[RMDB]
This 207-nucleotide RNA was probed chemically with DMS and 2A3. The 2A3 profile rests on 7,789 reads. Source: RMDB library M2RFPK, as collected in RNAgym.
RNA sequence: GGGAACGACUCGAGUAGAGUCGAAAAAGACGGACACCCAUCGACUGUCACCAGAUGCUGCAUCACCUGAUCACUGAUGGCUCAACGGUAUCCGGCGGUACAACUGAAUACUUGUAGCUGCCUUUUGAAAAGGAGUUCAUCUUCGGAUGAACUCCAAGAUACAAACUGAGUUCGCUCAGUUUGUAUCAAAAGAAACAACAACAACAAC
Reactivity to DMS in 0.01 (KOAc 150mM, MgCl2 10mM, bicine 150mM(pH8.5), 24C), signal-to-noise 2, nucleotides 027 to 156: a070g010a100c000g030g010a150c030a090c050c010c020a140u000c050g040a080c020u010g020u000c010a060c000c040a090g000a060u000g010c060u000g040c080a140u000c050a040c020c000u000g000a140u000c110a120c160u000g000a120u000g040g000c030u000c040a080a080c070g010g020u000a030u000c020c030g010g030c000g030g020u000a080c080a070a150c040u000g020a080a040u000a050c060u000u000g050u000a080g010c030u010g010c020c120u000u030u000u020g010a020a080a160a190g030g000a050g010u000u000c000a000u000c000u010u000c270g030g030a040u000g020a000a000c000u000c000c000a010a010
Reactivity to 2A3 in 0.01 (KOAc 150mM, MgCl2 10mM, bicine 150mM(pH8.5), 24C), signal-to-noise 7, nucleotides 027 to 156: a000g060a020c050g030g010a010c000a060c040c020c010a040u070c040g090a080c030u050g020u060c040a030c050c010a020g030a090u100g010c040u050g030c020a040u030c000a040c020c020u050g040a050u060c020a020c070u040g030a030u050g070g000c030u030c050a070a070c040g050g000u050a080u050c050c040g010g010c010g020g010u030a030c020a040a030c060u140g060a170a060u090a140c030u030u040g010u050a040g080c020u020g020c020c010u080u140u050u120g110a080a080a040a040g000g000a000g000u000u000c000a000u000c000u020u050c170g110g000a000u000g000a000a000c000u000c000c000a000a000

About this RNA: DMS (dimethyl sulfate) methylates the pairing face of unpaired adenines and cytosines.